Background
This 177-nucleotide RNA was probed chemically with DMS and 2A3. Values cover nucleotides 27 to 126. Conditions: 150 mM KOAc, 10 mM MgCl2 and 150 mM bicine (pH 8.5), 24 C. 2A3 adducts were read by reverse transcription with SuperScript II with manganese. Reactivities are rounded to 0.1 and cut off at 0 and 3.
RNA sequence: GGGAACGACUCGAGUAGAGUCGAAAACUGGUAUCUACGAAGAACUGUAGAAAAACAUGGAUGAUACGCAGAGAAGCGGACAAACGCCUUCCAUGGAUCAGCUGACAUUGCAGUGCGUGCAGGUAAAGUUAUUGUCCUCGUUCGCGAGGACAAUAACAAAAGAAACAACAACAACAAC
Reactivity to DMS in 0.01 (KOAc 150mM, MgCl2 10mM, bicine 150mM(pH8.5), 24C), signal-to-noise 1, nucleotides 027 to 126: c040u000g000g020u000a050u000c000u000a010c000g000a020a230g030a080a100c130u000g030u000a010g000a020a060a040a010a030c020a000u000g000g000a000u000g000a050u000a130c000g000c000a020g010a020g000a030a080g000c010g050g000a100c210a030a010a030c020g040c000c000u000u010c020c000a000u000g020g000a030u000c010a010g040c010u000g000a080c140a130u000u010g010c020a080g010u000g010c180g030u020g000c040a020g010g000u010a040a100a070
Reactivity to 2A3 in 0.01 (KOAc 150mM, MgCl2 10mM, bicine 150mM(pH8.5), 24C), signal-to-noise 1, nucleotides 027 to 126: c010u000g050g000u010a010u010c010u000a020c060g090a050a070g100a270a070c070u100g020u020a010g000a120a140a050a000a000c000a000u000g000g000a000u060g010a060u070a170c020g020c000a010g000a000g000a020a000g000c030g150g050a040c070a000a000a000c000g040c000c000u020u010c000c000a040u010g000g000a020u000c000a000g050c030u030g010a010c030a130u000u100g050c040a000g080u070g130c060g060u060g080c040a010g100g020u150a120a070a020